[RMDB]
RNA sequence: GGGAACGACUCGAGUAGAGUCGAAAACCGUUGCCGUUCGCGGCAACGGGAAGCAAGCAAGCAGCGCAACGAGACAAGACGUUAAUGAGAUCGCGCAUGCUGAAAAGCCACGCUUCGGCGUGGCUAAAUAGCACUUAUACUUCGGUAUAAGUGCUAUAAAAGAAACAACAACAACAAC
Reactivity to DMS in 0.01 (KOAc 150mM, MgCl2 10mM, bicine 150mM(pH8.5), 24C), signal-to-noise 4, nucleotides 027 to 126: c010c000g020u000u000g020c000c000g040u000u000c210g010c020g020g010c000a000a020c000g010g000g000a040a060g010c140a080a100g010c090a090a050g020c010a050g010c010g020c030a090a080c050g000a150g000a120c120a110a090g010a090c090g020u010u010a080a100u010g010a120g000a090u010c050g010c010g000c020a090u000g010c020u000g000a070a050a080a080g010c000c010a010c000g010c000u000u010c200g010g020c010g000u000g010g000c000u000a000a020
Reactivity to 2A3 in 0.01 (KOAc 150mM, MgCl2 10mM, bicine 150mM(pH8.5), 24C), signal-to-noise 2, nucleotides 027 to 126: c000c000g010u010u000g000c000c000g010u020u060c250g030c000g110g000c020a000a000c000g010g000g020a010a000g050c050a100a010g050c020a010a010g000c020a010g000c000g030c020a030a030c060g030a010g050a120c060a150a030g160a080c080g020u080u100a170a060u240g090a100g030a160u100c030g000c010g000c060a060u040g000c000u020g030a100a150a000a000g030c000c000a000c000g010c000u010u060c150g060g000c000g010u000g040g010c000u000a000a010